[RMDB]
RNA sequence: GGGAACGACUCGAGUAGAGUCGAAAAUGUAAAAUAUUAAACACAAUAUGUGACAUCCAUCUGGUAGAAAUGAAAACCGUAAACGACACGCUCUGUAGGAAAUUACGGUUAGGCAGCUAAGUAUUAAACACCCUUCCAAAUUCGUUUGGAAGGGUGUAAAAGAAACAACAACAACAAC
Reactivity to DMS in 0.01 (KOAc 150mM, MgCl2 10mM, bicine 150mM(pH8.5), 24C), signal-to-noise 2, nucleotides 027 to 126: u010g000u030a070a050a070a030u030a070u020u020a060a080a060c170a130c170a070a060u000a100u040g000u000g000a070c030a040u030c050c040a080u030c090u000g010g020u000a050g010a010a030a140u020g010a060a050a040a000c000c000g030u000a000a010a110c080g010a150c180a010c030g020c150u080c160u020g020u040a000g010g030a160a100a070u000u000a000c000g000g010u010u000a030g000g000c040a060g000c040u000a050a080g000u000a020u040u020a060a060
Reactivity to 2A3 in 0.01 (KOAc 150mM, MgCl2 10mM, bicine 150mM(pH8.5), 24C), signal-to-noise 2, nucleotides 027 to 126: u060g010u000a000a170a010a000u280a040u270u050a210a250a000c230a000c060a130a010u070a000u090g000u030g070a070c000a000u000c000c000a100u130c160u000g010g040u210a070g050a010a260a070u030g050a020a020a010a020c000c000g000u050a000a000a080c060g040a020c050a100c090g170c040u270c140u240g300u300a000g000g040a010a010a000u060u000a000c030g000g000u000u000a040g030g010c060a030g000c060u100a270a000g060u270a090u300u030a000a000

Conditions: 150 mM KOAc, 10 mM MgCl2 and 150 mM bicine (pH 8.5), 24 C. Chemical mapping of a 177-nucleotide RNA with DMS and 2A3. Reactivities are given for positions 27 through 126. Source: RMDB library OK1LIB, as collected in RNAgym. For DMS, 2,796 sequencing reads were counted.